Structure probing data (2A3 and DMS) for a 177-nucleotide construct.
For DMS the reverse transcriptase was MarathonRT.
For 2A3, 3,037 sequencing reads were counted.
For DMS, 2,727 sequencing reads were counted.
The reactions ran in a buffer of 150 mM KOAc, 10 mM MgCl2 and 150 mM bicine (pH 8.5), at 24 C.

[RMDB]
RNA sequence: GGGAACGACUCGAGUAGAGUCGAAAAAGUACCAUCUCUUAGUAAUUCACUUGCAAGUUGCGCAACAAAUGCGUUGACGGUGUCUCAUUAUUCAGAUGAACCCUUAAAUUCUAUAUACCUGCAUGGAUGUCUUAGCUACAUUCGUGUAGCUAAGACAAAAAGAAACAACAACAACAAC
Reactivity to 2A3 in 0.01 (KOAc 150mM, MgCl2 10mM, bicine 150mM(pH8.5), 24C), signal-to-noise 6, nucleotides 027 to 126: a000g120u080a050c000c020a090u020c040u010c010u040u030a020g040u090a100a060u130u110c020a030c080u000u140g030c080a100a120g030u040u050g020c000g070c000a020a130c040a170a300a100u120g030c020g040u060u140g060a020c030g030g000u060g030u010c070u000c030a030u010u060a030u100u060c060a020g030a090u030g090a150a110c010c000c000u060u160a070a080a060u180u050c060u020a080u040a030u040a210c010c010u040g060c080a050u100g020g080a090
Reactivity to DMS in 0.01 (KOAc 150mM, MgCl2 10mM, bicine 150mM(pH8.5), 24C), signal-to-noise 2, nucleotides 027 to 126: a040g010u040a130c110c000a060u000c070u000c040u000u010a030g010u010a060a020u020u020c000a010c100u040u010g030c040a070a020g010u000u020g000c060g000c050a030a070c210a040a070a170u000g020c030g000u010u000g050a070c060g000g020u000g050u020c030u010c070a070u000u020a020u000u040c300a010g000a030u000g000a130a150c040c030c000u010u000a070a070a050u000u000c050u020a060u030a060u040a060c070c000u000g000c090a020u000g000g010a150